Source: RMDB library OK1LIB, as collected in RNAgym. This 177-nucleotide RNA was probed chemically with 2A3.
[RMDB]
RNA sequence: GGGAACGACUCGAGUAGAGUCGAAAACUCUCUGCUAGCCUUCCAUUGGCAAGGACAAUUGCCAAAAGGAGGUAUCCAGCUCUAACCCUGCAGAACAGACAGAGAGCCCAGUAGCCUGGCAGCCAGAGCUCGGUUUUAGGUUCGCCUAAAACCGAGCAAAAGAAACAACAACAACAAC
Reactivity to 2A3 in 0.01 (KOAc 150mM, MgCl2 10mM, bicine 150mM(pH8.5), 24C), signal-to-noise 2, nucleotides 027 to 126: c000u010c000u000c000u010g000c020u020a030g070c010c010u070u050c050c020a060u010u040g000g040c000a000a000g060g000a030c140a170a300u040u000g000c000c000a000a040a100a010g020g020a000g000g000u000a020u040c000c020a040g020c000u000c020u110a070a040c010c000c070u080g020c040a070g010a170a120c020a070g270a020c010a000g020a000g000a020g020c000c000c000a020g000u000a010g020c000c020u020g010g000c020a020g080c050c000a020g030a030
Conditions: 150 mM KOAc, 10 mM MgCl2 and 150 mM bicine (pH 8.5), 24 C. For 2A3, 957 sequencing reads were counted.